Record summary
This 170-nucleotide RNA was probed chemically with DMS and 2A3. The reactions ran in a buffer of 150 mM KOAc, 10 mM MgCl2 and 150 mM bicine (pH 8.5), at 24 C.
RNA sequence: GGGAACGACUCGAGUAGAGUCGAAAAAGUAGCUAUAGUUGAUAGCUACUAUUCUUAUUUGAUGCCUGUGCUCUCAAUGACCGAUUGUCUGGCCGCUGAGACACAUAGGGAUUGUGAUUUUAAUAAAUGACUAUUCCGUUCGCGGAAUAGAAAAGAAACAACAACAACAAC
Reactivity to DMS in 0.01 (KOAc 150mM, MgCl2 10mM, bicine 150mM(pH8.5), 24C), signal-to-noise 6, nucleotides 027 to 129: a020g030u000a000g010c000u000a040u030a070g060u000u000g020a200u010a000g030c010u020a000c000u000a000u030u000c000u030u020a120u060u110u000g010a060u000g010c000c000u070g050u030g040c300u000c000u000c020a020a070u050g000a070c000c000g000a170u080u060g000u080c120u010g030g050c010c000g000c040u050g000a000g030a060c210a050c050a050u020a060g000g010g010a040u020u030g000u000g000a120u010u020u030u020a090a130u000a040a060a040u000g030a170
Reactivity to 2A3 in 0.01 (KOAc 150mM, MgCl2 10mM, bicine 150mM(pH8.5), 24C), signal-to-noise 9, nucleotides 027 to 129: a000g010u000a000g000c000u000a000u030a040g160u080u180g190a050u020a000g010c000u000a000c000u000a000u010u020c000u050u150a220u180u180u260g060a040u070g160c000c000u020g000u000g010c040u000c000u000c000a030a070u030g010a040c010c000g140a140u110u290g140u170c120u120g020g000c000c000g020c040u010g010a000g020a000c010a000c010a020u110a030g010g020g000a020u030u070g080u040g110a160u030u080u080u150a180a100u130a090a110a070u150g070a030
The 2A3 profile rests on 19,586 reads. 2A3 is a SHAPE reagent: it acylates the 2'-hydroxyl of flexible nucleotides of all four kinds. For DMS, 25,837 sequencing reads were counted.